[RMDB]
RNA sequence: GGGAACGACUCGAGUAGAGUCGAAAAGGGCGAUGAUCGAAAUCUUGUGCAGCGGCCGAGGCGUUUGUGCUGGACGUGGCCUGAAUAAGGCUGUAACCCAACGUUCCGCCUUUCGCCAGAAGAUGGAAUUAGUGUAGAUUUUCGAAUCUACACUAAUAAAAGAAACAACAACAACAAC
Reactivity to 2A3 in 0.01 (KOAc 150mM, MgCl2 10mM, bicine 150mM(pH8.5), 24C), signal-to-noise 9, nucleotides 027 to 126: g040g000g000c030g050a080u070g030a060u090c060g040a050a060a060u050c050u070u100g040u080g050c030a030g020c020g040g000c020c020g020a050g010g000c020g000u000u010u030g090u140g010c020u020g000g000a000c010g030u050g010g000c010c000u010g020a040a070u290a100a010g000g000c000u010g060u090a050a050c010c010c010a010a000c000g010u020u010c000c010g000c000c000u000u010u010c000g000c000c000a010g050a040a010g040a030u140g020g040a100
Reactivity to DMS in 0.01 (KOAc 150mM, MgCl2 10mM, bicine 150mM(pH8.5), 24C), signal-to-noise 9, nucleotides 027 to 126: g010g000g010c030g020a060u010g010a070u010c070g000a070a090a070u010c050u000u000g010u010g020c040a070g010c060g010g010c030c030g010a130g010g010c010g010u000u000u000g010u030g020c010u000g000g000a020c020g010u000g000g010c000c010u000g000a110a070u030a120a050g000g010c000u000g010u020a090a150c040c020c030a160a060c010g010u000u000c010c070g000c010c010u000u000u000c010g010c010c010a100g000a060a060g000a090u010g010g010a170